[RMDB]
RNA sequence: GGGAACGACUCGAGUAGAGUCGAAAAGGAGAUGCCAUGCCGACCCGAAGAGGAAAGAAGAACACGGACGCGAACCCGUAAGUGGAACCCUGAUCCUUUAUUGGGGGGUACACUCGAGGAGUGGAAGCGAUGAAGAUAACUUCGGUUAUCUUCAUCGAAAAGAAACAACAACAACAAC
Reactivity to DMS in 0.01 (KOAc 150mM, MgCl2 10mM, bicine 150mM(pH8.5), 24C), signal-to-noise 4, nucleotides 027 to 126: g000g010a090g020a100u000g020c040c040a070u010g020c030c020g000a120c040c000c040g030a090a080g000a040g010g000a040a050a070g000a110a090g000a060a090c080a060c080g000g010a080c070g010c040g010a050a080c080c040c020g010u000a060a030g030u000g000g000a210a110c040c010c010u000g010a080u000c190c090u000u000u010a070u010u000g010g000g010g000g000g000u000a160c030a010c010u000c050g000a050g010g000a120g030u000g010g010a080a090g010
Reactivity to 2A3 in 0.01 (KOAc 150mM, MgCl2 10mM, bicine 150mM(pH8.5), 24C), signal-to-noise 2, nucleotides 027 to 126: g070g000a060g020a030u080g050c020c000a030u050g000c000c030g070a090c000c020c010g030a050a010g030a020g060g050a040a030a020g070a050a010g010a020a010c050a010c040g030g020a020c030g010c030g060a030a020c000c020c000g000u000a030a010g010u020g010g010a060a040c010c000c000u040g040a090u090c030c060u100u140u070a120u090u090g000g000g000g000g010g010u010a020c000a010c010u000c020g030a070g030g010a020g010u050g030g040a060a000g040
The record gives the reactivity of an RNA of 177 nucleotides to DMS and 2A3. The reactions ran in a buffer of 150 mM KOAc, 10 mM MgCl2 and 150 mM bicine (pH 8.5), at 24 C. For DMS, 3,020 sequencing reads were counted.